[RMDB]
RNA sequence: GGGAACGACUCGAGUAGAGUCGAAAACAGCGUCUAGGCGAGCCGACUGUCCCUUGUACAGGACGGACAGCACACCUAAUGCCGCUACGAGGGCGCAGAUGAGGCCCAGAGCGAUUUUAUCGAACAGCCAGUCCAAUUGAUUCGUCAAUUGGACUGGAAAAGAAACAACAACAACAAC
Reactivity to 2A3 in 0.01 (KOAc 150mM, MgCl2 10mM, bicine 150mM(pH8.5), 24C), signal-to-noise 5, nucleotides 027 to 126: c020a010g010c000g040u000c020u040a040g030g050c030g050a070g010c040c040g120a140c010u000g020u000c000c000c030u000u130g180u060a100c090a080g050g100a070c040g050g030a010c000a010g040c080a020c010a040c060c020u130a120a080u200g030c040c010g010c030u040a090c070g070a150g050g000g000c080g000c070a030g060a140u180g060a050g090g000c000c010c000a010g040a000g030c020g010a010u030u060u100u170a180u150c080g020a070a050c020a010g030
Reactivity to DMS in 0.01 (KOAc 150mM, MgCl2 10mM, bicine 150mM(pH8.5), 24C), signal-to-noise 3, nucleotides 027 to 126: c140a100g000c000g030u010c020u000a040g020g020c020g030a060g020c060c040g020a040c030u000g020u000c040c010c060u020u000g000u110a100c300a280g020g000a070c050g000g030a090c040a070g000c000a080c060a070c030c060u000a100a030u010g010c020c040g010c080u000a090c200g010a020g010g000g010c010g000c020a150g020a090u030g000a120g000g000c000c000c000a090g030a090g010c020g000a080u020u040u000u040a100u000c010g010a140a110c140a140g000